[RMDB]
RNA sequence: GGGAACGACUCGAGUAGAGUCGAAAAGCUGCUAACACACAUCUUAAGCAUGGCGGUGGUAUCGCUGGUGCUAUUAAUGCGGCUUCAAAAGGGGCUGUCCAAAAAGAGUCAGAUGAGUAUAUUCUGGGUAAUAGCCAAAGUUCGCUUUGGCUAUUACAAAAGAAACAACAACAACAAC
Reactivity to DMS in 0.01 (KOAc 150mM, MgCl2 10mM, bicine 150mM(pH8.5), 24C), signal-to-noise 2, nucleotides 027 to 126: g010c020u010g040c050u000a070a120c160a070c170a140c080a130u000c040u000u010a110a120g020c060a010u000g010g000c020g030g040u020g000g020u010a040u000c050g010c010u010g020g050u000g000c050u000a090u000u000a090a010u000g010c000g000g010c000u000u010c090a040a070a110a080g010g020g000g010c010u010g020u000c040c040a050a080a090a080a110g000a100g020u000c040a040g000a090u000g010a100g010u000a050u000a120u000u000c010u000g000g020
This 177-nucleotide RNA was probed chemically with DMS. It was measured as part of the RMDB library 15KREP. DMS adducts were read by reverse transcription with MarathonRT. For DMS, 1,122 sequencing reads were counted.